Chemical mapping of a 207-nucleotide RNA with 2A3. The reactions ran in a buffer of 150 mM KOAc, 10 mM MgCl2 and 150 mM bicine (pH 8.5), at 24 C. The 2A3 profile rests on 1,242 reads. 2A3 adducts were read by reverse transcription with SuperScript II with manganese. Source: RMDB library OK3TST, as collected in RNAgym.
RNA sequence: GGGAACGACUCGAGUAGAGUCGAAAACAUCCAAUUUCAACUGGGGCAGCUUUACGCCCAGGAGCUAUUGAUGGCAGGCACAUCCAUUCGCUAUGGCUUUGAUGCAAGCCCUAUCAGCUUGCAUCUCGCGCGCCUGGCAGUGCUGGGUGCAAACCAGAGAUCUCCAUUAGUUCGCUAAUGGAGAUCUAAAAGAAACAACAACAACAAC
Reactivity to 2A3 in 0.01 (KOAc 150mM, MgCl2 10mM, bicine 150mM(pH8.5), 24C), signal-to-noise 2, nucleotides 027 to 156: c010a040u080c080c030a090a080u090u090u120c040a060a040c010u020g000g080g100g000c030a040g040c120u200u230u280a080c140g030c000c000c010a010g000g010a010g020c020u040a060u100u060g020a020u060g050g000c080a030g070g070c030a020c000a050u050c030c010a040u090u090c040g010c050u040a110u110g050g000c000u050u070u120g000a000u000g030c000a000a000g000c040c000c000u160a220u230c050a030g000c010u010u000g000c000a000u000c000u030c030g180c010g000c020g000c000c000u060g000g040c030a040g050u020g080c040u020g000g000g020u030g000c020a070a080a030c030c040a020g010